[RMDB]
RNA sequence: GGGAACGACUCGAGUAGAGUCGAAAAGAUAUGGAUGGCACCGAUAAGCUCCAAUCGGAAACGAUUGUGAGCUUUUGACGGUGAGUCCUAAGUCAAAGUUUCAAUCCAGUUCGCUGGAUUGAAACAACCCACUUUCUCAGUUCGCUGAGAAAGUGGGAAAAGAAACAACAACAACAAC
Reactivity to DMS in 0.01 (KOAc 150mM, MgCl2 10mM, bicine 150mM(pH8.5), 24C), signal-to-noise 1, nucleotides 027 to 126: g010a030u000a260u000g000g000a000u000g020g030c030a000c010c020g000a140u020a000a000g030c000u030c000c000a020a000u000c000g000g000a050a060a090c000g000a000u000u010g000u030g010a010g010c030u010u010u010u010g020a260c130g000g040u000g000a300g010u010c000c000u000a010a110g030u000c000a020a040a130g010u000u000u010c000a000a000u010c000c000a020g020u000u010c260g000c000u000g010g010a000u000u000g010a020a000a020c000a100a080
This 177-nucleotide RNA was probed chemically with DMS. DMS adducts were read by reverse transcription with MarathonRT. The DMS profile rests on 852 reads. Values cover nucleotides 27 to 126. Conditions: 150 mM KOAc, 10 mM MgCl2 and 150 mM bicine (pH 8.5), 24 C. The data come from the RNA Mapping Database (RMDB), library TTRDEL.